Conditions: 150 mM KOAc, 10 mM MgCl2 and 150 mM bicine (pH 8.5), 24 C. An RNA of 177 nucleotides, treated with DMS and 2A3 and read out base by base. DMS adducts were read by reverse transcription with MarathonRT. Values cover nucleotides 27 to 126. High DMS reactivity at an A or C suggests that its Watson-Crick edge is free.
RNA sequence: GGGAACGACUCGAGUAGAGUCGAAAAUUUGAAGGACUCAAGCUAUUUCCACUUUGCAAAGGGCGUUGAUCGUGAUCUCUUCAUUGAUGUCCAAGCAAUUGACAAAGAUGAGAUUGAAGCUGAAAUACCUGUAUUUCCGAUUCGUCGGAAAUACAGGAAAAGAAACAACAACAACAAC
Reactivity to DMS in 0.01 (KOAc 150mM, MgCl2 10mM, bicine 150mM(pH8.5), 24C), signal-to-noise 2, nucleotides 027 to 126: u000u030u030g010a050a090g000g050a240c120u000c080a040a030g010c060u030a070u000u020u000c000c020a080c090u020u010u000g020c050a110a110a050g020g000g010c000g020u010u020g000a030u070c100g040u000g020a060u060c240u020c060u000u000c000a000u000u000g020a210u000g000u000c080c080a060a130g040c210a070a150u000u010g010a080c020a020a020a110g020a060u000g010a050g050a060u000u030g000a120a050g040c040u000g010a050a050a060u020a090
Reactivity to 2A3 in 0.01 (KOAc 150mM, MgCl2 10mM, bicine 150mM(pH8.5), 24C), signal-to-noise 3, nucleotides 027 to 126: u140u060u120g110a080a060g100g050a030c030u010c030a020a000g010c000u030a100u090u050u020c030c000a030c090u050u000u030g000c030a120a070a100g070g000g000c020g060u020u070g050a060u030c060g030u030g080a090u030c050u000c030u210u010c000a010u020u040g030a000u030g010u000c020c000a010a000g030c070a080a240u050u060g030a080c040a000a030a000g090a190u050g040a050g020a140u050u070g140a140a000g010c040u050g050a110a030a030u200a130